The record gives the reactivity of an RNA of 177 nucleotides to 2A3 and DMS.
RNA sequence: GGGAACGACUCGAGUAGAGUCGAAAAGUCUAGUACUAGAGUACUGGUACCAUGACAUGCUAGGUCUAGUCUAGACAUGGAUCGCUAGCGCUAGCUAGCUAGCGUGUCGCACGGUACACUACAUGUAGGAUCAGGUCCUAUUCGUAGGACCUGAUCCAAAAGAAACAACAACAACAAC
Reactivity to 2A3 in 0.01 (KOAc 150mM, MgCl2 10mM, bicine 150mM(pH8.5), 24C), signal-to-noise 2, nucleotides 027 to 126: g030u000c060u030a020g000u050a020c030u040a070g100a040g200u030a040c030u050g030g010u000a010c000c030a020u190g010a010c010a040u030g030c000u000a010g020g140u010c000u000a010g030u050c000u020a000g030a020c010a000u080g100g060a190u060c100g000c170u070a040g000c030g000c170u000a010g030c030u000a020g010c010u000a000g000c030g000u020g000u000c040g000c040a090c150g000g000u000a000c060a000c020u110a030c010a160u170g050u200a070
Reactivity to DMS in 0.01 (KOAc 150mM, MgCl2 10mM, bicine 150mM(pH8.5), 24C), signal-to-noise 2, nucleotides 027 to 126: g000u000c070u000a030g020u000a030c050u000a080g020a200g030u010a020c050u010g010g000u000a020c030c060a190u000g010a010c010a040u010g010c020u000a000g010g010u010c010u000a010g000u040c000u010a040g000a000c040a120u000g010g010a070u000c270g010c030u000a080g000c110g000c020u000a030g000c130u000a030g000c010u000a000g000c020g010u010g020u000c040g000c300a050c190g000g010u000a010c000a120c100u000a050c090a080u010g010u000a080

High DMS reactivity at an A or C suggests that its Watson-Crick edge is free.
The data come from the RNA Mapping Database (RMDB), library OK2TRN.
As a SHAPE reagent, 2A3 marks flexible, mostly unpaired nucleotides at the ribose 2'-OH.